[RMDB]
Structure probing data (DMS and 2A3) for a 207-nucleotide construct.
Source: RMDB library RNAMAK, as collected in RNAgym.
2A3 is a SHAPE reagent: it acylates the 2'-hydroxyl of flexible nucleotides of all four kinds.
For DMS the reverse transcriptase was MarathonRT.
Conditions: 150 mM KOAc, 10 mM MgCl2 and 150 mM bicine (pH 8.5), 24 C.
RNA sequence: GGGAACGACUCGAGUAGAGUCGAAAAGAAGCUUUCGAGCUUCCAUAUCGAUAUGGAGAGAACUACCGUCGAAGCAGCGUUGAAAUAGAAUCGGAAACGAUUCUAUGGAGCUGUGUAUGACGGCUCUCCUAAGUCCAAGAAGUGAGUUCGCUCACAAAGCUUUGUACCUUUUCGAAGGUACAAAGCUAAAAGAAACAACAACAACAAC
Reactivity to DMS in 0.01 (KOAc 150mM, MgCl2 10mM, bicine 150mM(pH8.5), 24C), signal-to-noise 1, nucleotides 027 to 156: g020a000a000g050c000u000u000u000c300g000a150g030c020u010u000c010c020a280u000a060u010c050g000a110u000a300u000g030g000a000g010a130g050a100a100c170u000a300c000c000g010u000c020g010a210a300g010c000a000g000c000g000u000u000g010a170a130a010u000a000g000a000a010u000c000g030g010a200a050a190c010g010a020u000u000c000u000a010u000g000g000a200g000c000u040g030u000g000u000a190u000g000a010c020g020g000c040u000c010u000c000c000u010a000a110g000u010c090c010a110a210g000a110a200g000u010g010a090g010u000u000c160g000c050u050c000a040c000a000a150
Reactivity to 2A3 in 0.01 (KOAc 150mM, MgCl2 10mM, bicine 150mM(pH8.5), 24C), signal-to-noise 3, nucleotides 027 to 156: g000a000a000g010c040u150u180u300c300g030a010g000c020u060u000c030c010a080u110a150u300c090g060a030u020a090u200g020g000a020g000a000g000a100a080c140u190a060c220c000g000u020c010g080a050a000g010c000a000g000c010g260u300u040g020a010a010a000u000a000g020a000a000u000c010g010g000a050a030a050c020g000a010u000u040c000u010a000u010g000g000a000g010c010u030g050u120g020u190a080u240g000a000c020g000g000c000u010c000u000c000c000u000a000a000g010u020c030c010a100a070g140a150a030g070u010g000a010g000u040u200c230g110c120u030c000a010c010a030a120